[RMDB]
RNA sequence: GGGAACGACUCGAGUAGAGUCGAAAACUACCCGGUGGAAACAACUGAAGCUUCAACGCCUUUUUUUCCAAUCUUCUUUAGCACCGGGCUAGGGAGUAAGCCCGUGGAACCUUAGUUUUGUUCCCUCGGGACUUACUUGUGGUUCCUGUGGUGCACUAACAGUACAUCUCUUCGGAGAUGUACUGUUAAAAGAAACAACAACAACAAC
Reactivity to 2A3 in 0.01 (KOAc 150mM, MgCl2 10mM, bicine 150mM(pH8.5), 24C), signal-to-noise 2, nucleotides 027 to 156: c030u080a120c010c050c000g010g050u110g000g040a050a040a030c040a030a010c080u110g040a240a060g060c020u230u230c170a060a050c140g050c020c040u000u000u000u000u000u000u000c060c040a090a180u050c060u190u040c010u040u110u160a030g020c000a000c010c000g000g000g020c000u020a030g080g080g000a000g000u010a000a000g000c000c000c000g020u020g000g010a000a010c020c010u100u070a290g040u150u300u150u130g020u030u030c000c000c000u010c010g000g020g050a100c020u010u000a000c020u010u040g080u080g090g030u180u300c020c000u020g210u200g020g000u010g000c020a020c030u020
An RNA of 207 nucleotides, treated with 2A3 and read out base by base.
The RNA was probed in 150 mM KOAc, 10 mM MgCl2 and 150 mM bicine (pH 8.5) at 24 C.
Reactivities are given for positions 27 through 156.
The data come from the RNA Mapping Database (RMDB), library VIROID.